Overview:
Structure probing data (DMS and 2A3) for a 207-nucleotide construct. The 2A3 profile rests on 1,303 reads. DMS (dimethyl sulfate) methylates the pairing face of unpaired adenines and cytosines. It was measured as part of the RMDB library M2RFPK. For DMS, 1,981 sequencing reads were counted.
[RMDB]
RNA sequence: GGGAACGACUCGAGUAGAGUCGAAAAGGUAAUGGACGACGGCGGCGUGUGGCGAACAGGGAUACCGGUAGUCAGUGUCUCGAACAUCCCAAGGGGCGGCGGAGCUAGCACCCCGACACGUUAAGGCAAAACUUCGCACGGUUCGCCGUGCGAAGAACACUUUCUCAACGUUCGCGUUGAGAAAGUGAAAAGAAACAACAACAACAAC
Reactivity to DMS in 0.01 (KOAc 150mM, MgCl2 10mM, bicine 150mM(pH8.5), 24C), signal-to-noise 1, nucleotides 027 to 156: g020g010u010a060a050u020g020g030a050c030g030a040c180g050g000c060g020g050c030g050u000g040u040g030g010c030g010a060a160c090a150g040g000g020a120u030a010c040c010g000g080u000a080g000u010c060a060g030u000g020u000c010u020c050g000a050a070c060a170u010c000c000c000a160a110g000g030g010g000c040g000g000c020g000g000a050g010c030u000a080g010c090a080c020c000c030c030g000a050c040a020c020g000u000u000a080a090g030g000c040a030a050a080a060c000u010u010c000g030c000a040c000g000g010u010u000c300g000c030c000g000u000g020c030g010a010a000g010a050a050
Reactivity to 2A3 in 0.01 (KOAc 150mM, MgCl2 10mM, bicine 150mM(pH8.5), 24C), signal-to-noise 1, nucleotides 027 to 156: g040g030u090a040a050u130g070g010a010c020g000a020c070g010g050c020g030g000c050g010u050g020u030g030g050c050g000a060a000c060a050g040g000g000a010u040a070c030c060g050g070u070a020g030u060c040a020g040u010g030u020c000u010c010g020a030a020c020a110u060c000c010c020a050a080g020g010g010g000c050g030g020c050g030g010a060g070c090u100a010g020c010a060c010c000c000c000g020a000c010a010c060g060u050u100a100a010g050g000c050a040a020a050a050c010u000u000c000g000c010a000c000g000g000u050u020c190g010c090c020g020u000g000c000g000a000a000g000a010a000